Notes: The record gives the reactivity of an RNA of 177 nucleotides to DMS and 2A3. The 2A3 profile rests on 6,195 reads. For DMS, 8,321 sequencing reads were counted. Reactivities are rounded to 0.1 and cut off at 0 and 3. It was measured as part of the RMDB library M2PK50. Conditions: 150 mM KOAc, 10 mM MgCl2 and 150 mM bicine (pH 8.5), 24 C.
RNA sequence: GGGAACGACUCGAGUAGAGUCGAAAAGCACUCCUUUUCGAAGGAGUGCCCAGGCGCGCGGCCUUUGUCCUGUCGCGAGUGCGCCGCGCGCGAUAUACGCGCAUCUGUGCAUAUUCGUAUGCACAAAAAUGGCAUAAUCAUUCGUGAUUAUGCCAUUAAAAGAAACAACAACAACAAC
Reactivity to DMS in 0.01 (KOAc 150mM, MgCl2 10mM, bicine 150mM(pH8.5), 24C), signal-to-noise 5, nucleotides 027 to 126: g000c010a000c010u000c000c010u000u000u000u020c150g010a020a010g000g010a020g030u000g010c000c040c080a090g010g020c010g010c000g010c010g000g010c000c070u000u010u000g000u000c060c040u000g020u010c080g010c020g010a100g010u000g000c070g020c000c000g000c010g010c000g040c000g000a040u000a070u010a070c060g020c040g010c140a130u020c160u010g000u010g000c000a000u010a010u000u000c170g020u000a000u000g000c000a010c000a000a030a050
Reactivity to 2A3 in 0.01 (KOAc 150mM, MgCl2 10mM, bicine 150mM(pH8.5), 24C), signal-to-noise 2, nucleotides 027 to 126: g030c000a000c010u000c010c000u040u030u020u100c220g130a000a000g000g010a000g000u000g000c000c000c010a040g020g050c010g010c000g000c000g020g030c030c000u100u060u200g070u040c010c060u140g110u140c030g000c020g040a020g070u070g020c080g000c010c000g000c000g000c010g000c000g000a000u020a000u010a040c040g040c000g000c050a060u030c090u080g010u000g010c000a000u000a020u000u020c050g070u020a000u010g000c000a000c000a000a030a050